[RMDB]
RNA sequence: GGGAACGACUCGAGUAGAGUCGAAAAGAUAUGGAAGGUAGCAACAGCCACUUGUCGGAAACGACAAUGUGGACAUGCUACUUCCUAAGUCAAAACCUUUGAGAUAACUUCGGUUAUCUCAAAGGAACUAAAAUGCCUAGUUCGCUAGGCAUUUUAGAAAAGAAACAACAACAACAAC
Reactivity to DMS in 0.01 (KOAc 150mM, MgCl2 10mM, bicine 150mM(pH8.5), 24C), signal-to-noise 5, nucleotides 027 to 126: g000a020u000a210u010g000g000a020a030g010g000u010a000g000c010a020a080c280a210g010c000c000a000c010u000u000g010u010c000g020g000a070a070a150c000g010a000c000a000a000u010g030u010g000g010a060c080a090u000g000c000u000a010c000u000u000c000c000u000a030a130g000u000c020a160a070a110a140c000c000u000u000u010g000a010g000a000u000a010a010c000u010u010c190g030g010u000u000a010u000c000u000c000a000a000a000g010g010a030a070
Reactivity to 2A3 in 0.01 (KOAc 150mM, MgCl2 10mM, bicine 150mM(pH8.5), 24C), signal-to-noise 4, nucleotides 027 to 126: g000a020u060a000u080g000g050a020a040g260g110u070a010g000c020a010a180c070a250g090c000c000a010c000u000u020g000u000c010g040g010a050a030a030c010g000a000c000a010a030u300g000u000g010g050a020c000a010u010g010c000u000a000c010u000u000c000c000u000a040a010g020u020c030a020a020a060a300c000c000u000u000u010g020a010g000a000u020a010a000c000u030u090c280g130g000u000u000a000u000c000u000c000a000a000a000g000g000a000a000
Chemical mapping of a 177-nucleotide RNA with DMS and 2A3.